[RMDB]
RNA sequence: GGGAACGACUCGAGUAGAGUCGAAAAGAAAGAACAAUGUUUGUUUUGUCAUAGAAAUCUAAUUAGGCUGAACAGGACUCAGUGCUUGUGAAGAUCAUCGACAACUGCACAUUAAAAGCACAACCUAGCGAAUUUAAAAAUUCGUUUUUAAAUUCGCAAAAGAAACAACAACAACAAC
Reactivity to 2A3 in 0.01 (KOAc 150mM, MgCl2 10mM, bicine 150mM(pH8.5), 24C), signal-to-noise 1, nucleotides 027 to 126: g010a010a020a000g030a010a020c030a030a050u120g020u030u000u020g020u010u080u100u060g010u010c040a000u040a130g080a130a080a030u080c060u050a080a140u110u090a000g010g020c000u030g000a030a030c050a070g000g130a050c050u000c050a010g040u090g250c010u040u000g040u010g060a010a080g010a050u080c000a020u060c060g070a030c000a040a010c030u050g000c060a010c000a040u060u120a020a120a120a050g050c030a050c000a070a030c000c010u000a010
Reactivity to DMS in 0.01 (KOAc 150mM, MgCl2 10mM, bicine 150mM(pH8.5), 24C), signal-to-noise 2, nucleotides 027 to 126: g010a120a090a040g000a070a090c070a060a100u000g000u020u000u000g010u000u000u000u000g000u000c000a140u000a110g010a090a080a050u000c040u020a070a040u000u010a040g000g000c010u000g010a080a110c080a120g000g000a140c140u020c120a050g030u020g020c020u000u010g000u000g000a090a080g010a050u000c080a060u000c130g000a050c030a030a040c120u000g000c060a020c010a110u000u000a030a080a070a120g000c040a020c110a090a130c050c070u000a080